An RNA of 177 nucleotides, treated with DMS and 2A3 and read out base by base.
The RNA was probed in 150 mM KOAc, 10 mM MgCl2 and 150 mM bicine (pH 8.5) at 24 C.
It was measured as part of the RMDB library OK2TRN.
[RMDB]
RNA sequence: GGGAACGACUCGAGUAGAGUCGAAAAGGUAGUAGCACUCAUGAUCGAGCGUACCACUAGGAGACGAUCACGUCGGUACGGUACUAUGAUCAGUCGAUCUAUCAUGACGGUACAGUACAGUACUGCACAUGUAGUUGUACUUCGGUACAACUACAUGAAAAGAAACAACAACAACAAC
Reactivity to DMS in 0.01 (KOAc 150mM, MgCl2 10mM, bicine 150mM(pH8.5), 24C), signal-to-noise 9, nucleotides 027 to 126: g010g010u000a050g010u000a190g010c140a060c040u000c080a140u010g010a080u000c030g000a090g020c070g010u000a050c010c010a110c170u010a130g020g010a120g000a040c060g010a130u020c180a080c110g020u000c030g010g010u000a030c030g000g020u000a020c030u000a150u010g000a030u000c010a050g030u000c030g000a080u010c090u000a080u010c080a110u010g010a100c030g000g000u000a030c040a090g010u010a060c110a070g010u000a010c010u000g000c120a220
Reactivity to 2A3 in 0.01 (KOAc 150mM, MgCl2 10mM, bicine 150mM(pH8.5), 24C), signal-to-noise 9, nucleotides 027 to 126: g090g020u070a040g010u040a010g080c110a020c050u060c050a130u140g060a060u030c020g020a010g060c030g010u010a010c020c010a020c060u100a070g180g090a120g020a070c090g080a110u220c110a070c240g070u050c050g010g020u030a010c020g000g020u020a040c020u050a070u240g030a030u030c030a010g030u030c020g020a070u030c030u060a100u080c050a080u160g050a070c020g010g000u020a010c010a030g070u070a050c030a040g010u000a020c030u030g030c060a060